The data come from the RNA Mapping Database (RMDB), library 15KLIB. This 170-nucleotide RNA was probed chemically with 2A3 and DMS. For DMS, 14,559 sequencing reads were counted. The reactions ran in a buffer of 150 mM KOAc, 10 mM MgCl2 and 150 mM bicine (pH 8.5), at 24 C. 2A3 adducts were read by reverse transcription with SuperScript II with manganese.
[RMDB]
RNA sequence: GGGAACGACUCGAGUAGAGUCGAAAAACCGGCUCAUCUCGGCAAGGGGCGGCAGUCCUCAGUGCUCUUACUCUUUCCUAUAAAGAGGAGACUGCUGGACUCGCCGCCCAAGCCCGAGCAUGGGCCCAUACUUUGUGCUUCGGCACAAAGAAAAGAAACAACAACAACAAC
Reactivity to 2A3 in 0.01 (KOAc 150mM, MgCl2 10mM, bicine 150mM(pH8.5), 24C), signal-to-noise 6, nucleotides 027 to 129: a000c000c000g000g010c000u010c000a010u000c000u000c000g000g010c030a090a130g060g000g000g000c000g000g000c010a000g000u010c000c010u000c000a020g010u110g240c030u010c020u040u210a300c010u000c010u030u060u040c050c090u160a150u180a280a020a000g000a000g040g000a000g000a000c000u010g040c060u000g000g000a000c000u020c030g000c000c000g000c000c000c000a000a000g000c000c000c000g010a010g010c040a010u000g010g000g000c000c010c000a010u080a050
Reactivity to DMS in 0.01 (KOAc 150mM, MgCl2 10mM, bicine 150mM(pH8.5), 24C), signal-to-noise 4, nucleotides 027 to 129: a110c000c000g020g010c000u010c000a020u040c010u000c000g030g040c040a120a140g080g000g010g010c010g020g040c050a040g000u020c000c000u000c030a030g020u060g110c050u040c000u020u040a300c040u030c000u000u000u000c240c080u110a000u090a050a000a000g010a010g000g000a040g010a050c010u000g000c080u000g000g010a020c000u040c130g080c070c020g010c000c010c030a010a000g030c050c040c030g000a060g010c120a000u010g020g000g020c030c020c070a030u000a040